[RMDB]
An RNA of 207 nucleotides, treated with 2A3 and DMS and read out base by base. The DMS profile rests on 1,810 reads. For 2A3 the reverse transcriptase was SuperScript II with manganese.

RNA sequence: GGGAACGACUCGAGUAGAGUCGAAAAAGCAUUUAGCCUGAUAACUCUUUAAAUCAAAUCAGGCAAUAGAGAGAAACUCGAGAGGUGAAAACCCCACAGCAUUCUGAAAUGUAUUUGGGAGUAAUCUAUGACUAUUGGGUCUUCGGACCCAAUAGAACCAUGCAUUAAAGUUCGCUUUAAUGCAUGGAAAAGAAACAACAACAACAAC
Reactivity to 2A3 in 0.01 (KOAc 150mM, MgCl2 10mM, bicine 150mM(pH8.5), 24C), signal-to-noise 3, nucleotides 027 to 156: a000g050c070a070u140u100u190a030g000c000c000u020g030a040u070a120a080c020u120c100u200u300u190a160a150a090u180c060a160a220a000u000c000a010g000g000c020a010a000u010a000g040a000g020a000g020a070a130a030c040u030c090g030a060g000a010g040g050u030g040a020a110a000a030c010c000c020c000a010c020a020g030c010a020u080u100c040u300g100a060a210a060u060g050u050a210u080u030u080g010g000g010a120g050u060a050a030u050c050u080a060u150g060a060c000u000a000u000u000g000g000g000u000c030u000u010c100g030g000a000c000c000c000a000a000u000a040g010a000a000
Reactivity to DMS in 0.01 (KOAc 150mM, MgCl2 10mM, bicine 150mM(pH8.5), 24C), signal-to-noise 1, nucleotides 027 to 156: a090g010c050a130u000u000u000a150g010c030c000u000g000a040u000a000a090c050u000c060u000u050u000a060a060a150u000c060a060a260a090u040c000a010g010g040c000a060a080u000a090g010a090g010a190g020a230a150a020c020u000c020g020a050g010a100g000g010u010g010a120a100a120a060c010c000c020c020a140c040a180g050c000a030u010u000c140u000g020a100a110a020u000g010u010a070u000u020u000g000g030g020a040g010u000a070a050u000c030u010a130u010g010a200c000u000a010u000u000g020g020g020u000c050u000u000c300g030g030a020c010c010c000a010a000u010a000g020a030a060

For 2A3, 1,536 sequencing reads were counted. The RNA was probed in 150 mM KOAc, 10 mM MgCl2 and 150 mM bicine (pH 8.5) at 24 C. Source: RMDB library M2RFPK, as collected in RNAgym.